This 207-nucleotide RNA was probed chemically with DMS and 2A3. Reactivities are given for positions 27 through 156.
[RMDB]
RNA sequence: GGGAACGACUCGAGUAGAGUCGAAAAAGCGGGUCGAGGAUGCGAGGUUGUCUCGUUAACGAUCCUCGCAAAAUAUAAGUGCCAACUUAAAGCGCACUGAUCUAAGUCUUGCUGCUUAAGCGCUUAGAUCUGUCGGUAUAGGGCUUGUCUUCGGCCCCAAAGUGUUAUUCUUCGGAAUAACACUUUGAAAAGAAACAACAACAACAAC
Reactivity to DMS in 0.01 (KOAc 150mM, MgCl2 10mM, bicine 150mM(pH8.5), 24C), signal-to-noise 5, nucleotides 027 to 156: a070g010c070g020g030g030u000c000g000a030g020g030a120u010g010c000g020a030g020g020u000u000g020u000c010u010c270g000u000u000a060a050c020g000a050u000c010c000u000c010g020c020a050a050a080a110u010a100u000a070a080g020u000g010c010c010a090a120c100u000u000a070a090a150g010c060g000c050a050c030u000g000a020u000c010u000a010a030g010u000c060u010u000g010c010u000g010c220u010u010a090a040g010c010g000c020u000u000a020g000a010u000c010u010g010u000c030g030g010u000a140u000a120g020g020g010c040u010u000g010u000c030u010u000c030g030g000c000c000c010
Reactivity to 2A3 in 0.01 (KOAc 150mM, MgCl2 10mM, bicine 150mM(pH8.5), 24C), signal-to-noise 8, nucleotides 027 to 156: a010g100c050g000g000g000u000c000g000a010g020g010a020u050g000c010g000a000g010g020u100u130g090u110c030u020c060g080u070u150a070a030c030g020a060u210c000c000u010c000g000c000a030a030a060a010u250a010u050a060a030g040u080g220c020c000a060a050c110u140u200a150a080a040g110c030g000c030a020c020u020g000a000u000c000u000a000a010g050u000c070u180u220g020c030u020g020c030u110u200a070a010g000c000g000c000u000u000a000g000a010u000c000u010g010u020c030g060g040u140a120u170a230g020g000g000c000u020u040g000u020c000u000u000c000g000g000c000c020c000
For 2A3 the reverse transcriptase was SuperScript II with manganese. DMS adducts were read by reverse transcription with MarathonRT. The RNA was probed in 150 mM KOAc, 10 mM MgCl2 and 150 mM bicine (pH 8.5) at 24 C. The 2A3 profile rests on 9,486 reads.